[RMDB]
RNA sequence: GGGAACGACUCGAGUAGAGUCGAAAACAUUGGUGACCACUUUCUCUUACGGUGUUCAAUGCUUCUCACGUUACCCAGACCAUAUGAAGCGUCAUGACUUUUUCAAGUCCGCCAUGCCCGAGGGUUACAGGGCACAGACGUUCGCGUCUGUGCCCUGAAAAGAAACAACAACAACAAC
Reactivity to 2A3 in 0.01 (KOAc 150mM, MgCl2 10mM, bicine 150mM(pH8.5), 24C), signal-to-noise 2, nucleotides 027 to 126: c020a130u030u080g030g050u030g050a060c020c040a030c000u140u120u010c080u030c010u060u100a050c070g090g050u010g020u040u060c000a000a030u100g000c010u030u020c000u020c010a050c080g010u000u010a020c000c000c020a060g000a060c000c000a010u060a070u300g110a080a060g050c010g000u040c030a080u110g030a090c020u090u010u010u160u170c110a010a000g000u010c000c000g020c000c000a060u090g040c030c000c000g050a080g000g050g020u000u070a080